[RMDB]
Source: RMDB library RFM100, as collected in RNAgym. Chemical mapping of a 177-nucleotide RNA with 2A3. The reactions ran in a buffer of 150 mM KOAc, 10 mM MgCl2 and 150 mM bicine (pH 8.5), at 24 C.
RNA sequence: GGGAACGACUCGAGUAGAGUCGAAAAACGUAGCAGUACGCUGCUACGAAAUCGGAUGGUUUGUUUUAGCCUGAGCUAUGUGUUAUUGCAUAUUCAUAGCUACUUGCUAAAACAUACCAAUCGAGAACCUCCGCGAUCAAUUCGUUGAUCGCGGAGGAAAAGAAACAACAACAACAAC
Reactivity to 2A3 in 0.01 (KOAc 150mM, MgCl2 10mM, bicine 150mM(pH8.5), 24C), signal-to-noise 1, nucleotides 027 to 126: a000c010g000u000a000g000c000a010g000u070a000c160g030c070u000g000c010u000a000c000g000a030a000a000u010c040g000g030a030u010g000g000u010u000u000g000u020u000u060u000a000g040c020c010u000g000a000g000c000u000a000u000g040u020g040u120u090a180u140u300g030c090a050u050a150u110u000c000a000u000a000g000c000u070a300c010u000u020g000c000u000a000a010a000a000c000a000u000a020c010c000a000a010u050c020g000a040g040a020a000